[RMDB]
An RNA of 177 nucleotides, treated with DMS and 2A3 and read out base by base. For 2A3, 2,228 sequencing reads were counted. The reactions ran in a buffer of 150 mM KOAc, 10 mM MgCl2 and 150 mM bicine (pH 8.5), at 24 C. For 2A3 the reverse transcriptase was SuperScript II with manganese.
RNA sequence: GGGAACGACUCGAGUAGAGUCGAAAAUGGUCGCCGCCGGAGCCAGUGAGGUCGGGCGGCAUCAGGUCGGCGAGAGCUUUCGCUGGGUGGUGCUGGCUGACCCCGAAGGCAACGCUUUUUGCGUGGCCCCCAUUGGGAGGUUCGCCUCCCAAUGGGGAAAAGAAACAACAACAACAAC
Reactivity to DMS in 0.01 (KOAc 150mM, MgCl2 10mM, bicine 150mM(pH8.5), 24C), signal-to-noise 2, nucleotides 027 to 126: u000g010g020u000c080g010c040c050g020c040c010g020g010a290g040c010c000a070g040u030g000a020g000g020u000c010g020g000g020c010g010g010c020a000u000c000a020g000g030u000c010g000g020c010g000a020g010a240g010c210u000u000u010c020g020c010u010g000g020g000u000g000g010u000g010c000u010g010g010c010u000g000a020c000c000c020c010g000a150a130g010g000c030a190a080c020g010c030u000u010u000u000u000g010c030g030u010g000g010c050
Reactivity to 2A3 in 0.01 (KOAc 150mM, MgCl2 10mM, bicine 150mM(pH8.5), 24C), signal-to-noise 2, nucleotides 027 to 126: u070g010g010u020c020g050c070c030g040c030c020g060g020a020g030c030c010a060g060u060g220a050g000g000u010c030g020g000g050c000g020g000c000a000u010c000a000g130g260u000c000g020g010c050g010a030g020a060g260c020u140u300u020c000g010c030u000g010g040g020u000g000g010u000g010c000u010g230g030c020u000g000a000c000c000c020c000g030a110a070g010g000c010a000a000c000g000c010u190u140u040u240u290g020c050g020u060g050g000c030